[RMDB]
RNA sequence: GGGAACGACUCGAGUAGAGUCGAAAAAUUAGCAAUAUCGUUCUUCACGCUGAAUAACAAGUUUAGUCUGUUGCGCUCUUGCUGGAUGGAGGACCUGAUAUUGCGGAAGCUCUUCCAGUGGUCAAAAAGGUAGGAUAAUAUUCGUAUUAUCCUACCUAAAAGAAACAACAACAACAAC
Reactivity to DMS in 0.01 (KOAc 150mM, MgCl2 10mM, bicine 150mM(pH8.5), 24C), signal-to-noise 9, nucleotides 027 to 126: a080u030u030a120g000c010a010a000u000a010u000c010g010u010u000c010u000u000c020a060c170g010c060u010g010a090a050u040a080a140c130a050a080g010u010u010u030a070g000u020c060u010g010u020u020g020c110g010c090u000c050u010u020g010c050u010g010g000a090u020g010g000a010g000g010a040c060c210u040g020a020u000a010u000u000g000c000g000g010a050a070g000c090u010c070u010u010c010c020a090g000u010g020g010u010c080a050a040a110a110
Reactivity to 2A3 in 0.01 (KOAc 150mM, MgCl2 10mM, bicine 150mM(pH8.5), 24C), signal-to-noise 9, nucleotides 027 to 126: a000u190u140a010g000c000a020a000u000a010u030c010g020u040u000c010u030u020c020a010c090g100c080u070g050a110a060u200a110a040c050a100a050g020u110u160u220a110g040u100c080u100g200u160u220g070c090g020c050u050c010u050u120g020c040u060g080g060a140u030g030g010a000g000g000a000c000c030u040g010a010u000a010u020u020g000c000g000g000a020a010g010c010u020c030u100u010c000c010a090g030u100g100g080u150c100a050a060a020a030
This 177-nucleotide RNA was probed chemically with DMS and 2A3. The reactions ran in a buffer of 150 mM KOAc, 10 mM MgCl2 and 150 mM bicine (pH 8.5), at 24 C. For DMS, 32,044 sequencing reads were counted.